[RMDB]
RNA sequence: GGGAACGACUCGAGUAGAGUCGAAAAAUGAUUCGUAGUGUAAGACGAUCGACAGUCAUCGCUUGCCAGCAGGACCACCAAAGGAAUACGCAUCGGUAACUACUCGAGAUCCCAAGCGAUAAAACAACCCAUGCCUUAUAUUCGUAUAAGGCAUGGGAAAAGAAACAACAACAACAAC
Reactivity to DMS in 0.01 (KOAc 150mM, MgCl2 10mM, bicine 150mM(pH8.5), 24C), signal-to-noise 2, nucleotides 027 to 126: a120u010g010a080u000u000c050g020u000a090g010u000g050u000a090a060g000a110c020g030a040u000c000g000a060c130a090g000u040c070a080u000c070g030c060u000u010g000c070c030a100g050c060a050g000g020a150c040c030a070c030c030a060a070a090g020g030a040a070u020a050c070g010c140a050u000c030g010g000u000a070a140c000u000a000c010u000c000g010a030g000a180u000c000c040c010a050a070g020c200g050a120u000a020a020a060a100c210a050a140
Reactivity to 2A3 in 0.01 (KOAc 150mM, MgCl2 10mM, bicine 150mM(pH8.5), 24C), signal-to-noise 2, nucleotides 027 to 126: a000u100g020a030u050u030c010g050u080a110g020u070g020u270a050a100g090a110c030g030a050u030c040g040a080c050a000g060u110c030a000u040c030g000c040u000u040g020c000c010a020g000c000a030g060g010a020c020c000a060c040c010a150a060a060g110g030a090a110u100a070c070g020c040a010u020c020g000g050u060a110a100c010u010a010c000u000c010g010a010g000a030u020c000c000c010a000a020g140c040g020a060u160a120a070a010a030c030a010a050